RNA sequence: GGGAACGACUCGAGUAGAGUCGAAAAAGACAAAUUGGAAAGCACUCCAUUAGUGACCAAAGAUGAUUAUAAUCAAUUGGUCUCAGAUAUUGAAAAGGCUGCCGAUAAGUUACAAGAUGAGUUGAAUAUUAAGGGCGCUAAGCUAAUGGCAGAACUAACUAAAUCGUCAUUUCGAUGACGAUUUAGUAAAAGAAACAACAACAACAAC
Reactivity to DMS in 0.01 (KOAc 150mM, MgCl2 10mM, bicine 150mM(pH8.5), 24C), signal-to-noise 2, nucleotides 027 to 156: a170g010a200c040a060a080a050u000u020g020g000a130a080a070g030c030a100c040u000c020c040a080u000u000a140g020u010g000a080c020c040a040a050a210g000a110u000g010a090u000u010a250u010a070a120u000c040a120a260u000u010g000g020u000c020u000c050a240g040a150u010a060u000u000g000a060a060a040a060g050g010c030u000g050c020c040g020a060u000a060a190g000u010u000a110c050a070a090g000a120u020g030a130g070u000u000g030a070a060u000a080u000u010a100a050g000g000g030c010g000c040u010a040a300g020c030u020a020a050u000g010g040c010a010g000a040a070c100u010a040
Reactivity to 2A3 in 0.01 (KOAc 150mM, MgCl2 10mM, bicine 150mM(pH8.5), 24C), signal-to-noise 3, nucleotides 027 to 156: a000g070a020c050a000a140a020u060u060g040g010a170a060a040g040c010a010c060u020c010c010a050u030u110a030g040u050g010a000c000c000a000a020a070g120a080u080g030a040u180u270a120u300a280a100u020c020a010a100u050u010g000g000u000c010u000c020a040g010a030u090a060u160u130g020a010a000a060a120g070g010c020u040g000c020c000g030a070u040a070a060g050u060u110a030c040a060a000g020a110u160g020a080g110u060u030g090a130a030u140a020u220u120a070a030g030g030g020c000g030c120u050a060a020g000c020u050a100a000u030g010g000c010a000g010a070a010c060u090a020
The data come from the RNA Mapping Database (RMDB), library OK3TST. Structure probing data (DMS and 2A3) for a 207-nucleotide construct. The reactions ran in a buffer of 150 mM KOAc, 10 mM MgCl2 and 150 mM bicine (pH 8.5), at 24 C. The DMS profile rests on 2,306 reads.